[RMDB]
RNA sequence: GGGAACGACUCGAGUAGAGUCGAAAAGAGUCACAUCCUGACAUGGUGCUUGUCCUGGUGUGCUACAGUUCUCGGAGAGAAUCGCUGGUCUUGAUUCAUUGGUAGGGGCCUUCAGUGUCCCUUCUAGUGGAUUACAAGUAUUCGUACUUGUAAUCCAAAAAGAAACAACAACAACAAC
Reactivity to DMS in 0.01 (KOAc 150mM, MgCl2 10mM, bicine 150mM(pH8.5), 24C), signal-to-noise 9, nucleotides 027 to 126: g010a070g010u010c020a040c050a050u000c010c030u000g000a050c040a040u010g010g020u010g010c090u000u010g010u000c010c040u010g010g010u000g010u000g000c040u000a060c110a110g010u010u000c010u000c010g010g010a140g000a130g010a050a040u010c040g010c050u010g010g000u010c070u010u010g000a060u010u010c040a110u020u000g010g010u000a020g000g010g020g010c010c020u020u030c170a100g000u020g010u000c000c000c000u000u000c010u000a050g020
Reactivity to 2A3 in 0.01 (KOAc 150mM, MgCl2 10mM, bicine 150mM(pH8.5), 24C), signal-to-noise 9, nucleotides 027 to 126: g070a010g090u140c010a010c000a040u040c010c020u010g010a010c010a040u120g080g050u170g110c100u050u030g010u020c000c020u010g010g000u020g010u020g030c020u050a050c030a060g030u050u000c020u020c020g020g020a090g000a010g010a040a050u040c020g010c060u070g020g060u040c030u060u090g040a050u100u030c040a040u040u080g040g000u050a010g000g000g020g000c010c010u150u100c080a060g030u060g050u260c000c000c030u000u010c010u000a020g000
Structure probing data (DMS and 2A3) for a 177-nucleotide construct.
For DMS the reverse transcriptase was MarathonRT.
For 2A3 the reverse transcriptase was SuperScript II with manganese.
Values cover nucleotides 27 to 126.